[RMDB]
RNA sequence: GGGAACGACUCGAGUAGAGUCGAAAAACGUUCGGCGACGACGUCGGCCGCAAGACGAUGAUUUCGGUGUUCGAGCUCGCGGCCGACCAGCCGGAGCUCGUGUCCGCGUGGCGGCGCAAGCUGAGCAUCGACCAUAUACGUUCGCGUAUAUGGUCGAAAAAGAAACAACAACAACAAC
Reactivity to DMS in 0.01 (KOAc 150mM, MgCl2 10mM, bicine 150mM(pH8.5), 24C), signal-to-noise 4, nucleotides 027 to 126: a080c100g030u000u000c010g010g020c000g000a090c220g010a040c300g010u000c010g010g010c000c000g000c030a010a030g020a070c030g010a030u000g000a120u000u010u010c180g030g010u000g010u000u000c000g000a100g010c000u000c040g000c010g010g000c000c010g000a010c040c020a060g020c010c010g010g010a010g010c000u000c050g010u000g000u020c010c020g000c040g010u010g030g010c010g000g000c020g010c010a030a020g000c010u000g000a120g020c150a110
Reactivity to 2A3 in 0.01 (KOAc 150mM, MgCl2 10mM, bicine 150mM(pH8.5), 24C), signal-to-noise 3, nucleotides 027 to 126: a030c060g040u070u040c020g020g000c020g060a220c020g000a020c020g140u000c000g020g020c010c000g000c020a010a010g030a000c040g040a030u150g040a090u140u200u250c170g120g050u200g190u100u020c040g000a100g090c010u000c000g050c010g010g000c000c000g000a000c000c010a000g000c000c000g000g000a010g000c000u020c040g060u020g070u010c010c000g030c100g100u180g160g020c010g010g000c000g000c020a010a010g010c010u060g010a030g060c020a070
An RNA of 177 nucleotides, treated with DMS and 2A3 and read out base by base. Conditions: 150 mM KOAc, 10 mM MgCl2 and 150 mM bicine (pH 8.5), 24 C. The 2A3 profile rests on 4,871 reads. The data come from the RNA Mapping Database (RMDB), library OK2TRN.